Notes
This 177-nucleotide RNA was probed chemically with 2A3 and DMS. Values cover nucleotides 27 to 126. The reactions ran in a buffer of 150 mM KOAc, 10 mM MgCl2 and 150 mM bicine (pH 8.5), at 24 C.
RNA sequence: GGGAACGACUCGAGUAGAGUCGAAAAUCUGGCCGCCUCGUGCCUACGAUGGGCUAGGGAAAUGCCGUGACGAGACACGCACUGGGUGGCCAUUGCGUCUGCGGUAGAUCCGCCGAUUCCACAGCCCCACGCAAGACUUGUUCGCAAGUCUUGCGUGAAAAGAAACAACAACAACAAC
Reactivity to 2A3 in 0.01 (KOAc 150mM, MgCl2 10mM, bicine 150mM(pH8.5), 24C), signal-to-noise 2, nucleotides 027 to 126: u040c050u030g020g000c000c000g000c000c000u000c010g020u000g020c000c010u030a120c050g040a100u110g040g000g110c030u070a060g160g020g250a020a060a120u220g000c000c030g020u050g050a010c050g080a020g000a070c040a000c130g010c010a000c020u010g030g000g000u000g000g000c010c000a010u000u060g000c050g030u000c030u010g000c000g010g010u130a130g060a250u010c000c020g010c010c000g000a020u090u040c030c020a110c020a060g040c010c020c010
Reactivity to DMS in 0.01 (KOAc 150mM, MgCl2 10mM, bicine 150mM(pH8.5), 24C), signal-to-noise 1, nucleotides 027 to 126: u000c040u020g000g000c010c010g030c010c010u000c240g010u000g020c010c000u000a100c120g010a180u000g020g040g000c010u040a190g000g000g010a060a090a090u000g000c040c010g000u010g000a180c090g030a080g000a040c100a050c140g000c300a100c120u010g000g000g000u000g000g000c010c020a000u000u020g010c180g010u000c020u000g040c010g000g020u000a070g000a260u000c040c010g020c000c050g000a060u000u000c020c040a090c020a060g010c000c010c000